[RMDB]
RNA sequence: GGGAACGACUCGAGUAGAGUCGAAAAACUCGGGGCAGGGGUGGCUAGGCCUGGUCUCCGUAGAAGAGCCGGGCAGGCCGCAGGCAGAGGACUGCUGCUCUAGCAAAGUACGCUCCAGGACGUGUACCAGGCUAAUCGAGUUCGCUCGAUUAGCCUGAAAAGAAACAACAACAACAAC
Reactivity to DMS in 0.01 (KOAc 150mM, MgCl2 10mM, bicine 150mM(pH8.5), 24C), signal-to-noise 1, nucleotides 027 to 126: a080c010u000c010g020g040g030g050c050a140g010g000g000g010u030g000g000c040u000a080g000g000c000c000u030g030g000u040c000u000c010c040g000u000a100g010a150a060g000a000g010c010c050g000g040g000c010a190g000g030c000c000g030c060a070g000g000c080a070g000a140g000g030a080c070u000g000c000u000g050c030u010c020u000a140g070c130a130a060a150g010u010a170c090g000c000u000c040c080a180g010g020a110c120g000u000g020u010a120c030
Reactivity to 2A3 in 0.01 (KOAc 150mM, MgCl2 10mM, bicine 150mM(pH8.5), 24C), signal-to-noise 1, nucleotides 027 to 126: a010c000u010c000g000g020g000g060c020a040g090g020g010g090u050g000g050c000u020a030g080g080c010c010u040g010g010u080c010u000c110c000g040u030a030g060a210a000g010a020g010c020c000g000g030g010c020a000g030g020c040c020g010c000a000g010g090c020a030g020a030g220g060a050c010u070g030c030u000g030c030u050c000u040a000g050c020a000a170a000g030u020a000c060g000c000u000c030c000a040g030g020a040c030g020u040g000u020a050c000
Structure probing data (DMS and 2A3) for a 177-nucleotide construct. The data come from the RNA Mapping Database (RMDB), library OK1LIB.